[RMDB]
RNA sequence: GGGAACGACUCGAGUAGAGUCGAAAAAGGCGAACCUGACGUUCGCGUCAGGUUCGCCUGAGCAGUUUCUACUAUCUUUUGAUUUCUGGUGCAAACUUUCCUAUCCUCUUCGGAGGAUAGGAAAGAAAACAUUAAACAUGUUCGCAUGUUUAAUGUUAAAAGAAACAACAACAACAAC
Reactivity to DMS in 0.01 (KOAc 150mM, MgCl2 10mM, bicine 150mM(pH8.5), 24C), signal-to-noise 2, nucleotides 027 to 126: a010g010g020c020g020a040a010c000c020u000g000a000c040g050u000u010c270g010c000g000u010c020a010g010g020u020u000c000g020c000c000u010g000a050g010c120a130g010u000u000u000c010u000a090c120u000a060u000c020u010u000u000u000g010a110u010u000u000c040u010g020g020u000g010c160a110a100a170c000u000u000u010c000c010u000a000u000c000c000u000c000u000u010c170g020g010a020g000g000a000u000a000g000g000a000a000a010g000a020a070